[RMDB]
RNA sequence: GGGAACGACUCGAGUAGAGUCGAAAAUCUUGCCACCUAGGGACAGAGCUGUCCCAGUUCAACAGUGGAAAAACAGAGCAUGCCCCCAGGGAUAAAUCGGUUGAGGGACUACAGAGGAUCUCUCCUCAUGACUCUCUGUAUUCGUACAGAGAGUCAUAAAAGAAACAACAACAACAAC
Reactivity to DMS in 0.01 (KOAc 150mM, MgCl2 10mM, bicine 150mM(pH8.5), 24C), signal-to-noise 4, nucleotides 027 to 126: u000c040u000u000g020c030c020a030c040c080u000a110g010g010g010a030c010a050g000a170g000c160u000g010u020c000c000c010a120g010u000u000c170a130a110c220a100g020u010g020g000a040a080a050a140a080c110a090g000a050g000c090a060u000g000c010c020c010c030c040a050g020g010g020a080u000a040a070a080u020c080g030g020u000u010g010a100g000g000g010a070c070u010a100c180a090g000a040g020g010a090u000c090u000c120u000c010c030u010c090
Reactivity to 2A3 in 0.01 (KOAc 150mM, MgCl2 10mM, bicine 150mM(pH8.5), 24C), signal-to-noise 1, nucleotides 027 to 126: u030c000u000u100g080c000c020a000c010c030u040a080g000g030g000a000c030a010g230a070g150c140u040g020u010c000c030c000a040g020u100u080c020a010a050c000a100g020u070g050g070a150a090a000a000a000c020a030g070a040g110c050a080u080g020c020c000c000c010c010a000g030g000g060a050u060a080a110a010u060c020g010g020u090u040g030a070g000g010g010a000c010u120a030c020a020g060a050g020g010a060u040c010u000c010u000c100c010u020c030
This 177-nucleotide RNA was probed chemically with DMS and 2A3. The RNA was probed in 150 mM KOAc, 10 mM MgCl2 and 150 mM bicine (pH 8.5) at 24 C. DMS adducts were read by reverse transcription with MarathonRT. 2A3 adducts were read by reverse transcription with SuperScript II with manganese.